Source: RMDB library M2PK50, as collected in RNAgym. This 177-nucleotide RNA was probed chemically with 2A3 and DMS. The 2A3 profile rests on 9,141 reads. For DMS, 5,320 sequencing reads were counted. For DMS the reverse transcriptase was MarathonRT.
[RMDB]
RNA sequence: GGGAACGACUCGAGUAGAGUCGAAAACGGAUCAACUUCGGUUGAUCCGAAAGGGACGGGUCGGGAGGGGGAUACUCGCGGUCCCAUGAAGAAUCCAGACUGAAAGGAAGGUCUUCGGACCUUCCAACAUAAUAUUCAAGUUCGCUUGAAUAUUAUGAAAAGAAACAACAACAACAAC
Reactivity to 2A3 in 0.01 (KOAc 150mM, MgCl2 10mM, bicine 150mM(pH8.5), 24C), signal-to-noise 3, nucleotides 027 to 126: c010g000g000a000u010c000a000a000c010u040u050c130g140g000u000u020g000a000u000c000c000g000a010a000a000g020g000g150a060c110g020g010g150u260c100g030g030g070a170g040g050g000g000g010a010u030a040c010u010c010g050c040g030g030u010c000c000c010a010u110g050a020a060g050a020a020u040c030c020a030g110a150c090u160g070a120a060a030g000g000a000a000g000g000u010c000u020u040c070g030g000a010c000c000u000u000c000c000a000a000
Reactivity to DMS in 0.01 (KOAc 150mM, MgCl2 10mM, bicine 150mM(pH8.5), 24C), signal-to-noise 4, nucleotides 027 to 126: c010g000g010a020u000c000a000a000c010u000u010c170g040g000u000u010g000a010u000c000c000g000a020a030a200g010g000g010a110c120g010g020g020u010c080g010g010g000a120g000g010g000g040g010a050u000a010c020u000c040g030c060g000g000u000c000c010c010a040u020g010a090a050g010a070a080u000c040c070a110g010a110c140u000g010a070a120a140g000g000a020a020g020g000u000c000u000u010c170g010g010a010c000c000u000u000c000c010a040a040